The record gives the reactivity of an RNA of 207 nucleotides to 2A3. For 2A3, 714 sequencing reads were counted. For 2A3 the reverse transcriptase was SuperScript II with manganese.
RNA sequence: GGGAACGACUCGAGUAGAGUCGAAAAGAAGGGUGAAAGCCCUUGAUACUGUAGUGGAAAUUAUAAAUAAGAAGAGUUCUAAGUUGCUUAAGCAGAACUAAAAUAAAAAGACAAGCAUUAUUACAAACAUGGCGAGGUAAGUUCGCUUACCUCGCAACUACUUCUUACCCUUCGGGGUAAGAAGUAGAAAAGAAACAACAACAACAAC
Reactivity to 2A3 in 0.01 (KOAc 150mM, MgCl2 10mM, bicine 150mM(pH8.5), 24C), signal-to-noise 1, nucleotides 027 to 156: g050a020a010g010g020g000u030g060a090a000a020g000c000c010c020u010u000g020a020u020a030c020u080g060u220a020g010u000g030g070a020a130a070u140u120a130u110a260a120a060u080a030a020g010a090a050g050a020g000u020u030c020u050a140a110g030u060u040g060c080u240u140a060a020g060c000a010g020a040a000c010u010a010a060a090a100u160a000a020a020a010a000g050a080c020a010a010g000c010a010u000u060a030u080u110a110c100a010a010a000c060a110u080g080g000c000g000a000g000g000u010a010a020g040u090u150c140g000c070u000u000a010c000c000u000c000g000c010a000a000